[RMDB]
RNA sequence: GGGAACGACUCGAGUAGAGUCGAAAACGGCAUCCGCGACAACGACCGUGCGCUGAUCGCGGUGGGCAUCGCCGUGUUGGCGCUGCGCGCGCUGGUGUUGCCCUGGCUGCUGGCCCGCGCGGUGGGCUCGGCAGUGCUAGUUCGCUAGCACUGCCGAAAAAGAAACAACAACAACAAC
Reactivity to DMS in 0.01 (KOAc 150mM, MgCl2 10mM, bicine 150mM(pH8.5), 24C), signal-to-noise 1, nucleotides 027 to 126: c050g000g000c010a110u010c020c010g010c000g020a050c030a030a060c020g010a110c040c100g020u000g010c030g000c030u000g000a090u000c020g000c000g010g020u010g020g010g020c050a030u000c020g020c000c000g010u000g030u000u020g030g020c010g000c000u000g000c110g050c090g040c120g010c000u010g020g020u000g010u010u000g020c020c010c010u010g020g000c100u010g000c030u000g000g020c000c030c010g010c010g000c020g020g000u000g000g010g010c090
Reactivity to 2A3 in 0.01 (KOAc 150mM, MgCl2 10mM, bicine 150mM(pH8.5), 24C), signal-to-noise 2, nucleotides 027 to 126: c030g030g000c010a070u020c020c020g000c030g050a020c030a110a000c030g120a090c010c070g060u060g030c060g000c030u040g050a220u090c030g000c040g040g010u060g010g030g000c030a030u090c000g010c010c010g050u030g110u100u250g040g000c020g000c070u100g000c040g010c020g000c000g000c190u080g000g010u010g020u070u070g050c020c000c010u020g070g000c020u040g000c000u030g070g040c000c000c010g030c020g000c010g040g090u040g000g030g000c050